[RMDB]
RNA sequence: GGGAACGACUCGAGUAGAGUCGAAAAAGGUGUGGAGCGACCUUAAACAGUUCUGGUGCUGCUCUGAAUGGAGUGCUCUACUGAGAUUAUAAAAUAGAAGGUAAGCUAUUAUCUCUUACAACAGGGCGAAGCACUCGGGGGUUCGCCCCCGAGUGAACGAGCGCAUAUAGUUCGCUAUAUGCGCUCGAAAAGAAACAACAACAACAAC
Reactivity to 2A3 in 0.01 (KOAc 150mM, MgCl2 10mM, bicine 150mM(pH8.5), 24C), signal-to-noise 2, nucleotides 027 to 156: a000g060g000u040g020u080g040g010a000g000c010g010a010c000c010u150u130a040a130a000c030a060g010u020u020c020u030g000g020u110g010c050u020g000c000u040c000u020g100a120a100u160g040g010a000g040u070g020c010u100c080u010a050c060u080g000a000g020a150u110u080a110u230a130a190a090a020u120a040g040a100a010g030g010u040a010a010g000c030u020a030u090u100a110u170c020u000c000u020u080a030c030a100a030c000a020g000g000g000c020g050a080a010g000c000a000c000u000c010g000g000g000g000g000u060u110c150g060c000c000c000c000c000g000a000g000u000g010a000a000